An RNA of 177 nucleotides, treated with DMS and 2A3 and read out base by base. It was measured as part of the RMDB library OK1LIB. DMS adducts were read by reverse transcription with MarathonRT.

[RMDB]
RNA sequence: GGGAACGACUCGAGUAGAGUCGAAAAUGGUGUUAAGUGGAAUAAGUGGCCGAAUAUACAUAUAUGUACAGGGGGCUACAUAUAUGUAUAUGCCCCCUCGCGUCAGUAUAAGUAGGUAUAAGGUGGAAUACUACGAUGAGUUCGCUCAUCGUAGUAUAAAAGAAACAACAACAACAAC
Reactivity to DMS in 0.01 (KOAc 150mM, MgCl2 10mM, bicine 150mM(pH8.5), 24C), signal-to-noise 4, nucleotides 027 to 126: u020g010g010u000g010u020u010a040a140g020u020g000g010a100a060u030a070a090g010u020g010g020c020c040g020a130a080u000a020u000a010c000a040u020a030u000a040u010g020u000a040c150a090g000g010g010g000g000c070u030a030c040a040u020a050u010a040u020g010u010a020u010a010u020g010c040c000c000c010c000u000c010g000c080g010u010c080a080g000u010a030u010a060a110g000u010a040g000g000u000a050u030a070a150g010g020u000g000g010a120
Reactivity to 2A3 in 0.01 (KOAc 150mM, MgCl2 10mM, bicine 150mM(pH8.5), 24C), signal-to-noise 4, nucleotides 027 to 126: u090g020g030u070g030u090u110a140a080g030u020g070g120a110a050u140a150a120g030u080g070g020c000c010g050a050a000u050a000u000a030c030a000u040a000u020a020u070g000u010a030c060a040g030g000g030g000g030c010u030a000c020a000u060a010u020a010u050g040u020a020u000a000u040g020c000c000c000c010c000u000c010g010c010g040u080c020a010g020u050a050u020a170a030g060u070a040g050g040u050a090u010a060a000g080g020u050g020g040a030